The data come from the RNA Mapping Database (RMDB), libraries RFM100 and RFMREP. This 177-nucleotide RNA was probed chemically with 2A3 and DMS. Conditions: 150 mM KOAc, 10 mM MgCl2 and 150 mM bicine (pH 8.5), 24 C. DMS adducts were read by reverse transcription with MarathonRT.
RNA sequence: GGGAACGACUCGAGUAGAGUCGAAAAUGUUUUGCUCGCAGCCGGUCUGGAGCAAAGCUCAUCGGAACUGACAAUUCUGUCGUCCUCUCGCGGAAAUAUACAUCGUUUCCAUGGCUGCUAGGCUGUACUAACCGCUGUAUUUCGAUACAGCGGUUAGAAAAGAAACAACAACAACAAC
Reactivity to 2A3 in 0.01 (KOAc 150mM, MgCl2 10mM, bicine 150mM(pH8.5), 24C), signal-to-noise 8, nucleotides 027 to 126: u110g000u000u010u000u010g000c000u000c010g300c030a010g010c040c090g260g010u110c030u030g010g010a000g000c000a000a000a010g010c010u010c030a070u050c010g050g010a060a040c040u060g040a020c080a050a180u100u030c050u080g070u050c010g030u020c000c000u020c010u000c020g030c050g080g070a030a120a010u220a010u040a090c070a080u030c020g000u000u010u000c010c020a050u060g030g000c020u060g010c050u090a080g050g020c010u010g020u040a070
Reactivity to DMS in 0.01 (KOAc 150mM, MgCl2 10mM, bicine 150mM(pH8.5), 24C), signal-to-noise 4, nucleotides 027 to 126: u020g000u000u010u010u000g010c010u000c010g000c000a020g010c030c150g010g010u070c020u010g000g000a030g000c020a020a030a030g000c020u020c160a150u000c040g000g000a060a060c050u000g020a070c210a090a300u010u000c050u000g000u010c040g000u000c030c030u000c020u000c010g000c080g000g010a050a050a070u020a100u020a080c150a140u020c080g020u000u000u010c000c010a090u020g010g000c000u020g020c070u030a070g000g020c000u000g020u010a160